[RMDB]
RNA sequence: GGGAACGACUCGAGUAGAGUCGAAAAGAAACAACACUGCUUAUGAAGACGGUGGUGCAGUAUAUAUUUUAGGUGAAAAUUGUACCUUGAACAAUACAUUAUUCAUCAAUAACGUUGCCCACAACGACCCUAUAGUGCAGUUCGCUGCACUAUAGGGAAAAGAAACAACAACAACAAC
Reactivity to DMS in 0.01 (KOAc 150mM, MgCl2 10mM, bicine 150mM(pH8.5), 24C), signal-to-noise 3, nucleotides 027 to 126: g000a110a080a050c040a060a160c090a020c060u010g000c010u010u000a120u060g010a090a170g000a070c090g000g030u000g000g010u000g000c060a170g030u000a080u030a060u030a060u060u000u000u000a090g020g010u000g000a010a010a050a040u010u010g000u010a010c250c130u010u010g020a090a110c300a050a110u000a040c030a000u040u020a100u000u000c000a000u000c010a060a030u020a070a120c130g040u000u000g000c000c000c030a080c140a060a080c170g000a100
Reactivity to 2A3 in 0.01 (KOAc 150mM, MgCl2 10mM, bicine 150mM(pH8.5), 24C), signal-to-noise 7, nucleotides 027 to 126: g040a000a070a010c040a030a010c020a010c030u050g010c040u170u130a120u300g120a090a030g060a040c060g020g030u040g010g060u070g020c040a020g080u070a040u010a030u000a100u170u140u090u160a040g020g000u010g010a010a010a020a040u110u130g020u010a020c030c050u070u130g060a110a020c040a060a040u020a040c000a010u020u050a160u190u000c010a000u000c010a020a110u070a090a020c090g030u040u050g060c000c010c000a040c030a100a020c060g060a080